[RMDB]
Record summary: Structure probing data (2A3) for a 207-nucleotide construct. 2A3 adducts were read by reverse transcription with SuperScript II with manganese.
RNA sequence: GGGAACGACUCGAGUAGAGUCGAAAAUAAAAGUCGAGAGUAUUGCUAUAGUUAAGGUUGCGCUUGCCUAUUUAGGCAUACUUCUCAGGAUGGCGCGUUGCAGUCCAACAAGAUCCAGGGACUGUACAAAACAGGCUCGUGUUCGCACGAGCCUGAACGAUGCCCCUAAGUUCGCUUAGGGGCAUCGAAAAGAAACAACAACAACAAC
Reactivity to 2A3 in 0.01 (KOAc 150mM, MgCl2 10mM, bicine 150mM(pH8.5), 24C), signal-to-noise 1, nucleotides 027 to 156: u090a000a080a020a000g100u200c180g000a000g000a000g010u020a090u120u180g040c010u060a060u140a220g080u110u150a190a030g040g030u030u200g010c040g020c030u020u110g000c000c010u020a050u140u210u210a060g000g000c010a000u020a020c000u270u010c000u000c020a000g030g100a120u110g000g000c030g000c020g040u040u050g030c020a000g000u000c000c000a050a050c110a030a280g070a150u050c000c070a040g000g000g010a010c010u010g040u020a010c060a000a020a050a020c000a000g000g000c000u000c010g000u000g000u080u060c170g000c240a000c000g000a000g020c000c000u000g000a000a000
About this RNA
The data come from the RNA Mapping Database (RMDB), library M2RFPK. Conditions: 150 mM KOAc, 10 mM MgCl2 and 150 mM bicine (pH 8.5), 24 C. Reactivities are given for positions 27 through 156.